[RMDB]
RNA sequence: GGGAACGACUCGAGUAGAGUCGAAAAGAAUCGGACGUGAGCUUGGCCGAUGUGGCCGAACGCGAGGCCCCCGCACGCAUGGCGGCCAUCACACGCUGGGAGAGCACGCUGGCGAGAAUCAUCGCGGUGGCCUUCGGUUGCGAGCACUUCUCGCGGACCCAACUUUCGAGUUCGCUCGAAAGUUGGGAAAAGAAACAACAACAACAAC
Reactivity to 2A3 in 0.01 (KOAc 150mM, MgCl2 10mM, bicine 150mM(pH8.5), 24C), signal-to-noise 1, nucleotides 027 to 156: g010a020a000u050c050g070g020a010c010g150u160g020a000g010c060u000u070g070g000c020c020g100a100u070g090u120g120g020c010c000g030a030a110c110g010c060g040a030g000g000c000c000c020c000c010g040c000a040c010g130c140a160u060g030g000c000g000g000c010c000a100u060c000a020c010a010c120g080c070u040g000g060g000a230g000a010g040c000a120c160g020c010u000g070g000c020g010a110g110a110a080u130c080a070u100c070g000c010g000g000u000g020g030c000c000u090u010c000g030g000u040u060g090c000g000a030g010c030a050c080u070u060c000u020c020g000c000g060g000a050